[RMDB]
RNA sequence: GGGAACGACUCGAGUAGAGUCGAAAAUUAUACAGCGUGUAUAGGAUGGCGACGGUAACUGCUACACAAAUACCGAUCAACAGAAGAAUACCAAUCAUUUAUUGACAAUAACUUCACUAUGAUCAAGUAUGUAAUAAUCAUCUUUUCACUAAGUAAGAGCUUAUACCCCGUUCGCGGGGUAUAAGCUAAAAGAAACAACAACAACAAC
Reactivity to 2A3 in 0.01 (KOAc 150mM, MgCl2 10mM, bicine 150mM(pH8.5), 24C), signal-to-noise 1, nucleotides 027 to 156: u100u020a060u000a040c000a010g030c000g110u020g050u060a040u080a040g010g000a040u000g080g040c040g040a020c030g030g080u030a010a080c000u120g000c040u130a030c060a000c030a050a130a040u040a010c100c050g020a150u040c010a010a090c110a110g000a070a000g020a000a050u110a070c090c000a030a020u070c020a120u050u080u260a030u130u050g000a000c080a040a070u090a150a060c030u020u020c060a010c080u060a030u070g010a030u030c020a000a080g000u050a070u150g010u120a130a190u110a110a120u100c040a000u020c000u000u030u040u010c050a070c100u040a060a000g000u000a110a050g110